[RMDB]
RNA sequence: GGGAACGACUCGAGUAGAGUCGAAAAAGCACGUAGUGUUUGAAGAUUUCGGUCCUAUGCAAUAUGAACCCAUGAACCAUGUCAGGUCCUGACGGAAGCAGCAUUAAGUGGAUCCUCAUAUGUGCCGUAGGGUAGCCGAGAUUUAGCUGUCGACUUCGCUAUACUCUUCGUUCGCGAAGAGUAUAGCAAAAGAAACAACAACAACAAC
Reactivity to 2A3 in 0.01 (KOAc 150mM, MgCl2 10mM, bicine 150mM(pH8.5), 24C), signal-to-noise 6, nucleotides 027 to 156: a000g040c030a020c030g070u070a060g010u030g040u090u210u300g070a070a020g010a020u010u010u000c120g120g060u300c030c000u020a030u030g000c000a000a000u000a000u020g010a010a010c010c000c000a000u020g010a010a030c120c040a030u010g040u090c000a010g000g030u030c000c020u180g150a130c160g010g000a010a010g000c000a010g000c000a010u010u040a100a000g000u010g000g010a020u050c020c020u000c010a010u020a010u050g300u060g080c100c050g000u010a010g030g000g000u010a010g000c000c020g010a000g000a000u060u090u040a020g000c020u020g010u040c000g020a020c010u050u040c050
Reactivity to DMS in 0.01 (KOAc 150mM, MgCl2 10mM, bicine 150mM(pH8.5), 24C), signal-to-noise 2, nucleotides 027 to 156: a050g000c020a050c060g030u000a080g040u010g020u000u000u000g000a120a220g000a040u050u010u010c030g010g000u010c020c020u010a060u000g040c010a060a050u010a030u010g020a090a110c020c000c010a070u000g010a110a220c150c160a120u000g030u010c060a300g020g040u010c030c020u000g010a130c260g010g000a050a080g020c050a220g020c020a070u000u000a080a300g050u000g000g010a030u000c070c120u000c010a020u000a040u000g000u020g050c050c090g040u000a070g020g010g010u000a110g010c000c050g000a080g010a050u000u000u000a030g030c030u030g030u010c020g000a300c110u000u000c070